[RMDB]
RNA sequence: GGGAACGACUCGAGUAGAGUCGAAAAGCAGCUACACCCUAUGCGAAUAGUCGCACGUGACUAUUCGUCACUAAGAAAGCGUUCAGUGAAGGUAUGAACGCUUGAUCGUACCUCGUAGGGUGUAGAAGAUACGACUCUUAUUCGUGAGAGUUGUAUCAAAAGAAACAACAACAACAAC
Reactivity to 2A3 in 0.01 (KOAc 150mM, MgCl2 10mM, bicine 150mM(pH8.5), 24C), signal-to-noise 9, nucleotides 027 to 126: g070c050a010g030c000u000a000c000a000c000c000c000u000a000u020g020c000g000a000a000u000a000g010u000c010g030c130a110c210g240u230g010a000c000u000a000u000u000c000g000u000c000a010c020u080a090a050g070a080a060a010g140c130g100u080u070c040a020g010u020g170a100a020g080g020u110a040u040g020a060a010c030g020c090u030u100g010a020u020c010g010u020a050c010c020u040c010g010u000a000g000g000g000u000g000u000a000g000a000a000
Reactivity to DMS in 0.01 (KOAc 150mM, MgCl2 10mM, bicine 150mM(pH8.5), 24C), signal-to-noise 9, nucleotides 027 to 126: g010c130a140g000c000u000a000c000a010c000c000c000u000a010u000g010c010g000a010a000u000a000g000u000c000g020c240a140c300g010u030g010a010c000u000a010u000u000c010g010u000c040a020c040u010a110a110g010a070a050a050g010c090g010u010u010c040a050g010u010g010a050a030g010g010u010a030u000g010a010a030c030g010c110u020u020g000a060u000c030g020u000a030c030c020u000c010g010u000a000g000g000g010u000g010u000a000g000a040a060

This 177-nucleotide RNA was probed chemically with 2A3 and DMS. Source: RMDB library OK1LIB, as collected in RNAgym. The DMS profile rests on 178,784 reads. 2A3 adducts were read by reverse transcription with SuperScript II with manganese. Reactivities are given for positions 27 through 126. Conditions: 150 mM KOAc, 10 mM MgCl2 and 150 mM bicine (pH 8.5), 24 C.